This 177-nucleotide RNA was probed chemically with DMS and 2A3.
Source: RMDB library OK2TRN, as collected in RNAgym.
DMS adducts were read by reverse transcription with MarathonRT.
The reactions ran in a buffer of 150 mM KOAc, 10 mM MgCl2 and 150 mM bicine (pH 8.5), at 24 C.
RNA sequence: GGGAACGACUCGAGUAGAGUCGAAAACUGGUGGAUUAUGCCCACACGCCGGGGGCGUUCGAGAAGCUGCUGCCGUUCGUGCGCCGGUUCGUGGAGGGACGCCUGAUCGUGGUCUUCGGGUCGGCGGGCUCUAAUGCCGAUUCGUCGGCAUUAGAGCAAAAGAAACAACAACAACAAC
Reactivity to DMS in 0.01 (KOAc 150mM, MgCl2 10mM, bicine 150mM(pH8.5), 24C), signal-to-noise 2, nucleotides 027 to 126: c060u010g020g050u000g010g010a110u010u000a080u010g010c020c000c010a140c160a090c030g020c140c030g000g020g030g030g010c040g000u030u000c040g020a090g010a070a130g010c050u000g000c080u000g020c030c040g030u000u000c030g020u000g020c040g000c060c000g010g020u000u000c060g040u010g010g010a120g000g010g010a090c040g000c040c010u020g030a050u000c070g030u010g010g000u000c050u010u010c040g010g010g000u000c010g010g010c050g000g020
Reactivity to 2A3 in 0.01 (KOAc 150mM, MgCl2 10mM, bicine 150mM(pH8.5), 24C), signal-to-noise 2, nucleotides 027 to 126: c060u090g020g020u050g070g060a060u140u100a110u300g070c020c000c010a020c010a010c030g090c020c010g010g000g060g030g050c080g010u040u040c070g040a070g020a220a060g030c070u170g030c070u080g010c040c010g040u080u040c060g050u080g080c040g000c060c030g030g000u050u150c050g020u050g010g040a200g030g040g020a030c020g000c000c010u030g030a030u070c020g060u090g110g080u010c000u070u050c040g000g020g000u010c000g010g000c010g040g040